[RMDB]
Chemical mapping of a 177-nucleotide RNA with DMS. Source: RMDB library TTRINS, as collected in RNAgym. For DMS, 3,515 sequencing reads were counted. The RNA was probed in 150 mM KOAc, 10 mM MgCl2 and 150 mM bicine (pH 8.5) at 24 C.
RNA sequence: GGGAACGACUCGAGUAGAGUCGAAAAGAUAUGGACCGACGGCUGGCUUGGAUUUAAGAUUUGAGUAAGAUGGUCGGAAACGACCAUCUUACUCAAAUCUUUGUCAGCCACCGUUCGGUCCUAAGUCCGCUACAAUUUAGUUCGCUAAAUUGUAGCGAAAAGAAACAACAACAACAAC
Reactivity to DMS in 0.01 (KOAc 150mM, MgCl2 10mM, bicine 150mM(pH8.5), 24C), signal-to-noise 2, nucleotides 027 to 126: g010a100u000a300u000g000g010a010c010c000g000a010c000g000g000c300u000g000g010c010u010u020g010g000a010u010u010u000a010a020g000a010u010u000u010g010a020g010u000a000a000g020a010u000g000g020u000c000g000g000a060a120a260c000g010a020c010c000a010u000c000u000u000a010c000u010c000a000a000a010u000c000u010u000u000g000u000c000a060g000c000c000a020c000c000g000u010u000c010g010g000u010c000c000u000a010a100g010u000c040